[RMDB]
RNA sequence: GGGAACGACUCGAGUAGAGUCGAAAACUUGGGAAGGCAGACUACAUCUUUGUUGAUGACUUUCACCCAUUGAUUUAUACAGUGCGUUUUAGACGUUCUCAAGAAGUUAUUCAAGUAUGGCAUGCCGCAUGCCCAAAGUUUUCGAACUUUGGGCAUGAAAAGAAACAACAACAACAAC
Reactivity to DMS in 0.01 (KOAc 150mM, MgCl2 10mM, bicine 150mM(pH8.5), 24C), signal-to-noise 4, nucleotides 027 to 126: c040u000u000g030g020g010a010a010g000g010c040a050g000a150c120u010a060c070a040u020c090u000u010u020g020u000u010g000a120u020g010a130c040u010u010u000c070a210c050c000c010a040u020u000g000a080u020u010u010a090u030a100c120a030g020u020g010c060g000u020u020u030u010a080g010a070c020g010u000u000c010u000c040a040a060g000a060a070g010u020u030a060u020u000c050a050a080g010u000a050u030g000g020c090a040u000g000c040c070g000
Reactivity to 2A3 in 0.01 (KOAc 150mM, MgCl2 10mM, bicine 150mM(pH8.5), 24C), signal-to-noise 6, nucleotides 027 to 126: c020u040u070g050g020g020a080a020g050g010c040a030g030a100c030u070a020c080a030u040c050u020u190u200g140u100u140g040a050u030g030a040c020u050u070u030c050a070c020c030c020a020u010u090g070a080u060u130u160a150u040a100c040a030g000u030g060c010g030u020u000u050u120a090g030a040c020g010u070u000c040u010c020a030a070g030a080a010g080u020u060a100u080u090c040a080a040g050u050a090u120g060g000c070a040u050g040c010c000g030

The data come from the RNA Mapping Database (RMDB), library OK1LIB.
Structure probing data (DMS and 2A3) for a 177-nucleotide construct.
Values cover nucleotides 27 to 126.
The DMS profile rests on 7,491 reads.
For 2A3 the reverse transcriptase was SuperScript II with manganese.
The 2A3 profile rests on 4,115 reads.